[RMDB]
RNA sequence: GGGAACGACUCGAGUAGAGUCGAAAACUAAUUUAUCCACUCCGAUUGCGGCAAAGUUGGUGACGAAAAGUACGUUAACUGGGAAGAACUUUCAUCUACAUGACGUUUGACGUUAUUACUUCCGAUGUUGGCCAAGAUCACAGAGUAGAGAAUGUCACUACGUGAGUGGAUUCGUCCACUCACGUAGAAAAGAAACAACAACAACAAC
Reactivity to DMS in 0.01 (KOAc 150mM, MgCl2 10mM, bicine 150mM(pH8.5), 24C), signal-to-noise 2, nucleotides 027 to 156: c070u010a070a090u020u000u000a180u010c010c000a040c020u000c020c120g020a110u000u000g020c300g010g000c040a060a060a020g040u000u000g000g040u000g010a060c060g020a030a090a040a180g000u000a030c060g030u000u000a030a120c120u020g040g010g060a110a160g000a030a180c110u000u000u000c030a080u000c050u010a080c120a180u000g030a050c100g000u000u000u000g010a170c020g010u000u000a060u000u000a140c050u000u000c020c040g030a040u010g030u000u000g060g010c030c050a040a300g020a090u010c030a060c060a080g000a020g060u000a030g010a160g030a140a110u000g010u000c040a150
Reactivity to 2A3 in 0.01 (KOAc 150mM, MgCl2 10mM, bicine 150mM(pH8.5), 24C), signal-to-noise 3, nucleotides 027 to 156: c030u040a050a110u090u070u100a150u070c000c010a010c000u000c000c030g050a040u020u070g040c060g000g000c000a070a110a120g020u040u030g050g000u060g020a010c040g010a040a000a070a090g100u060a010c010g020u040u040a160a020c080u070g040g020g030a040a070g010a090a050c060u130u240u070c080a100u000c040u150a130c020a140u070g050a010c040g020u050u110u160g030a000c000g010u040u070a050u100u080a050c030u050u040c020c000g020a010u060g060u190u050g010g000c000c010a010a020g020a030u030c040a020c040a050g050a000g050u050a010g020a000g020a110a030u090g060u120c040a010

This 207-nucleotide RNA was probed chemically with DMS and 2A3. For 2A3, 1,609 sequencing reads were counted. The DMS profile rests on 3,033 reads. The reactions ran in a buffer of 150 mM KOAc, 10 mM MgCl2 and 150 mM bicine (pH 8.5), at 24 C.